[RMDB]
RNA sequence: GGGAACGACUCGAGUAGAGUCGAAAAGAUAUGGACCAUUGAGGGAGAACGCUAUCGGAAACGAUAGAUGUUCGAAGAACUCAAUGUGGUCCUAAGUCAAACAAGAUGCGGUUCGCCGCAUCUUGAAGCAUACUUUUUCGUUCGCGAAAAAGUAUGCAAAAGAAACAACAACAACAAC
Reactivity to 2A3 in 0.01 (KOAc 150mM, MgCl2 10mM, bicine 150mM(pH8.5), 24C), signal-to-noise 1, nucleotides 027 to 126: g000a000u010a000u030g000g010a010c010c040a000u030u040g000a030g000g010g000a090g000a020a000c000g000c010u000a010u000c000g030g000a000a010a000c010g000a000u010a010g060a070u070g020u000u020c000g020a080a000g020a000a010c000u010c000a010a040u210g100u190g150g000u010c000c000u000a000a000g000u010c020a220a010a000c010a000a020g010a000u010g020c010g000g120u080u110c300g050c140c000g000c000a000u020c000u010u000g010a020a000
Reactivity to DMS in 0.01 (KOAc 150mM, MgCl2 10mM, bicine 150mM(pH8.5), 24C), signal-to-noise 2, nucleotides 027 to 126: g000a010u000a020u020g010g000a000c000c050a070u030u010g000a030g000g060g000a020g030a010a020c000g000c000u010a000u010c010g010g010a000a000a020c000g010a020u000a000g000a030u010g030u010u010c020g010a050a220g000a280a300c000u010c000a000a040u020g010u020g020g020u000c000c000u000a010a060g000u000c010a170a180a290c030a010a000g010a010u000g010c000g010g020u010u010c300g030c010c010g010c000a010u000c000u000u000g000a080a090